Source information: Chemical mapping of a 177-nucleotide RNA with DMS and 2A3. Conditions: 150 mM KOAc, 10 mM MgCl2 and 150 mM bicine (pH 8.5), 24 C. As a SHAPE reagent, 2A3 marks flexible, mostly unpaired nucleotides at the ribose 2'-OH. For DMS, 6,529 sequencing reads were counted. DMS adducts were read by reverse transcription with MarathonRT.
[RMDB]
RNA sequence: GGGAACGACUCGAGUAGAGUCGAAAAGAUAUGGAGGUAGUUCGACGAUCGUGGGAACUACUUUCUCGGAAACGAGAAAGCCCACGGGAGAACAAACUCCUAAGUCAAACUGGCCUUCGGGCCAGAACAUACUCUUCUUGUUCGCAAGAAGAGUAUGAAAAGAAACAACAACAACAAC
Reactivity to DMS in 0.01 (KOAc 150mM, MgCl2 10mM, bicine 150mM(pH8.5), 24C), signal-to-noise 6, nucleotides 027 to 126: g000a040u000a300u000g000g010a010g000g000u010a300g000u000u000c010g020a110c250g000a060u000c010g010u000g000g010g000a100a030c070u020a300c020u000u000u000c000u000c000g000g000a100a090a200c000g010a020g010a000a000a000g000c000c000c000a010c010g000g000g000a060g000a020a010c010a020a150a300c010u000c000c010u010a060a150g010u000c030a080a120a140c010u000g000g000c000c000u000u010c190g030g010g020c000c000a000g000a050a170
Reactivity to 2A3 in 0.01 (KOAc 150mM, MgCl2 10mM, bicine 150mM(pH8.5), 24C), signal-to-noise 5, nucleotides 027 to 126: g020a010u070a050u170g030g000a010g020g030u150a030g020u050u020c050g140a290c010g010a300u010c010g010u000g000g000g000a020a020c010u110a060c000u290u010u000c000u000c000g040g000a080a100a060c030g000a000g000a010a010a010g000c010c010c000a000c000g010g000g000a050g000a000a010c000a060a300a000c010u000c000c000u020a100a000g000u010c010a030a060a160c010u000g000g010c020c000u050u060c300g070g010g000c000c000a000g000a000a000